[RMDB]
RNA sequence: GGGAACGACUCGAGUAGAGUCGAAAAGUCCGCCCGGCCGGCGCCUUGCCUUCGUCGGCCUCAAAUGGGCUCAGCAACUCGACGAGCGCGGCGGCGCGCUCGGCCGCCUCGUCCCACACGGCGUCGCCAUGUAUCAACCUUUCGAGGUUGAUACAUGAAAAGAAACAACAACAACAAC
Reactivity to 2A3 in 0.01 (KOAc 150mM, MgCl2 10mM, bicine 150mM(pH8.5), 24C), signal-to-noise 8, nucleotides 027 to 126: g030u020c020c010g010c020c010c000g000g000c000c000g000g010c010g010c010c030u060u100g020c000c010u020u030c010g020u000c010g010g010c010c000u040c010a070a080a030u220g010g020g000c030u040c040a070g040c040a050a110c050u050c100g030a020c020g000a020g010c090g000c010g070g000c020g030g060c060g010c010g000c060u050c040g030g000c000c000g000c000c000u020c010g030u010c010c010c000a050c010a010c030g050g000c010g020u030c010g010c010
Reactivity to DMS in 0.01 (KOAc 150mM, MgCl2 10mM, bicine 150mM(pH8.5), 24C), signal-to-noise 5, nucleotides 027 to 126: g020u020c010c030g010c040c040c060g000g010c000c000g000g000c010g000c110c050u000u000g020c030c050u020u000c010g000u010c020g000g000c010c020u000c100a030a120a110u050g010g010g020c000u000c110a090g010c120a070a090c100u010c070g000a130c020g000a040g020c130g030c080g020g010c180g000g000c070g020c080g030c040u010c060g000g010c020c020g010c020c020u010c030g000u000c010c030c040a080c070a090c060g000g000c010g000u000c040g010c070